An RNA of 177 nucleotides, treated with DMS and 2A3 and read out base by base. 2A3 adducts were read by reverse transcription with SuperScript II with manganese. The 2A3 profile rests on 977 reads.
RNA sequence: GGGAACGACUCGAGUAGAGUCGAAAAACUGAAGGAUGUUCGGCAUCAUGAUGGCGACGCGGUCGCCCUUGACCAGCCCGCGUGACUGGAGCCAUGCGGCAAGCGCACGCGAAUGGUCGUCCAGUUAAUCGCAGUCACUGUUCGCAGUGACUGCGAUAAAAGAAACAACAACAACAAC
Reactivity to DMS in 0.01 (KOAc 150mM, MgCl2 10mM, bicine 150mM(pH8.5), 24C), signal-to-noise 1, nucleotides 027 to 126: a070c060u000g000a160a030g000g000a020u000g030u010u010c220g000g010c030a080u000c050a020u000g000a100u010g000g000c030g000a020c030g020c180g010g010u000c030g000c000c020c030u000u020g000a060c040c050a100g030c150c030c060g000c070g000u000g000a030c010u020g010g000a300g010c000c000a130u010g010c160g020g040c000a050a080g030c230g060c020a010c010g030c000g020a030a020u010g000g010u020c100g010u000c030c030a010g000u020u000a100
Reactivity to 2A3 in 0.01 (KOAc 150mM, MgCl2 10mM, bicine 150mM(pH8.5), 24C), signal-to-noise 1, nucleotides 027 to 126: a000c000u030g020a060a020g100g000a030u050g020u130u150c100g080g010c030a010u030c030a030u110g060a070u130g000g150c030g000a020c030g020c090g300g000u030c010g000c020c020c000u030u080g000a000c020c030a020g030c000c070c000g010c010g000u040g070a110c020u020g040g000a010g000c080c040a050u170g070c020g020g020c000a120a000g130c070g000c110a010c050g010c010g010a060a060u010g030g000u020c010g040u000c010c030a000g030u020u090a030